RNA sequence: GGGAACGACUCGAGUAGAGUCGAAAAGAACGAGCCAUCAUGAAAGCUUCGAACCAACGAUGUGAAAGUGAUGGAAAUCACCUAUUUUUUUAGGUGCUGAACGCAGUUGGUUUGCGGAAAGCUCGGAGGGAUUUCUAAUGUUCGCAUUAGAAAUCCCAAAAGAAACAACAACAACAAC
Reactivity to DMS in 0.01 (KOAc 150mM, MgCl2 10mM, bicine 150mM(pH8.5), 24C), signal-to-noise 3, nucleotides 027 to 126: g020a140a070c010g020a030g040c000c050a130u050c100a090u030g000a190a140a290g000c020u000u050c000g000a060a160c110c230a100a110c010g000a040u010g040u000g000a150a070a250g020u020g000a130u020g000g000a070a080a040u040c000a000c000c000u000a000u000u000u050u050u060u020u000a000g010g000u000g000c080u000g020a100a040c020g010c010a130g020u000u000g000g000u020u010u000g000c000g000g000a090a070a150g000c030u000c000g000g000a240
Reactivity to 2A3 in 0.01 (KOAc 150mM, MgCl2 10mM, bicine 150mM(pH8.5), 24C), signal-to-noise 3, nucleotides 027 to 126: g050a070a000c010g000a020g020c030c000a090u050c010a050u170g090a120a090a000g040c050u050u080c060g040a050a050c000c050a040a050c010g020a050u040g040u040g050a170a180a100g030u040g050a060u050g050g010a020a110a060u040c000a020c010c020u010a110u060u100u020u000u000u030u050a030g020g000u020g000c030u030g040a070a020c010g010c010a050g000u080u120g050g040u060u060u090g030c010g010g020a080a000a000g000c000u010c010g010g000a070

The record gives the reactivity of an RNA of 177 nucleotides to DMS and 2A3. DMS (dimethyl sulfate) methylates the pairing face of unpaired adenines and cytosines. 2A3 adducts were read by reverse transcription with SuperScript II with manganese. It was measured as part of the RMDB library OK1LIB. The RNA was probed in 150 mM KOAc, 10 mM MgCl2 and 150 mM bicine (pH 8.5) at 24 C. For DMS the reverse transcriptase was MarathonRT.